[RMDB]
RNA sequence: GGGAACGACUCGAGUAGAGUCGAAAAGAUAUGGACGAUCCGAAGGCGCACAGCUGUUCGGAAACGAAAGCUGUGAACUACGCUGUAGAUCGUCCUAAGUCAAAACCCGCACGUUCGCGUGCGGGAACAAAUGAAGUUGGUUCGCCAACUUCAUUUGAAAAGAAACAACAACAACAAC
Reactivity to 2A3 in 0.01 (KOAc 150mM, MgCl2 10mM, bicine 150mM(pH8.5), 24C), signal-to-noise 6, nucleotides 027 to 126: g010a020u050a020u100g000g000a000c010g000a000u000c070c050g090a170a130g130g000c070g010c030a000c000a010g020c010u060g300u160u020c020g010g010a020a020a010c000g020a020a000a000g000c000u000g000u010g020a060a030c070u150a040c110g000c060u110g060u130a040g000a000u010c000g000u000c000c000u000a000a000g010u010c010a020a030a080a170c000c000c000g000c000a010c000g060u100u110c300g020c000g110u000g010c020g000g000g000a000a010
Reactivity to DMS in 0.01 (KOAc 150mM, MgCl2 10mM, bicine 150mM(pH8.5), 24C), signal-to-noise 7, nucleotides 027 to 126: g010a040u000a270u000g010g010a010c000g010a010u000c010c040g020a160a240g010g010c020g030c000a010c010a000g010c000u000g010u000u000c000g010g000a040a050a110c000g000a010a080a030g000c000u000g010u000g010a140a070c150u010a230c040g010c010u000g010u000a140g000a010u000c000g010u000c000c010u000a010a080g000u000c030a110a040a090a120c010c000c010g010c010a010c000g010u000u010c200g010c020g030u000g000c000g000g000g000a010a050